[RMDB]
RNA sequence: GGGAACGACUCGAGUAGAGUCGAAAAGAAAAGUUCAAGGCAACCGAUCCGGAUCAGGGUGGCAAGAGUAAGGUAUCCUAUUCGAUCGAUCGAUCUUCGGACCGUCAGCGCCAGUUUGCCAUUAACCCUCUCUCUAAAUCUUCGGAUUUAGAGAGAGAAAAGAAACAACAACAACAAC
Reactivity to 2A3 in 0.01 (KOAc 150mM, MgCl2 10mM, bicine 150mM(pH8.5), 24C), signal-to-noise 3, nucleotides 027 to 126: g020a020a070a010a010g010u030u060c040a020a000g030g010c010a020a020c030c000g020a030u000c040c030g000g000a020u040c090a020g000g010g040u010g040g030c040a050a030g080a020g250u170a130a050g100g040u050a020u020c010c010u010a040u030u050c020g050a100u050c030g020a030u040c040g010a020u000c020u040u050c070g030g020a030c010c000g020u050c040a030g020c020g020c050c010a020g030u040u060u070g050c000c010a030u090u070a080a090c000c040
Reactivity to DMS in 0.01 (KOAc 150mM, MgCl2 10mM, bicine 150mM(pH8.5), 24C), signal-to-noise 5, nucleotides 027 to 126: g020a080a080a090a090g020u000u010c040a070a070g000g010c040a120a060c060c020g000a060u000c090c030g020g000a040u000c140a040g020g000g010u010g010g010c040a050a110g010a110g010u000a060a090g030g010u010a040u000c020c010u000a070u000u000c040g000a060u000c070g000a070u010c060g000a050u000c030u000u000c100g020g000a040c030c030g010u000c080a090g010c060g000c040c030a100g010u000u000u000g010c030c030a090u010u000a070a130c120c090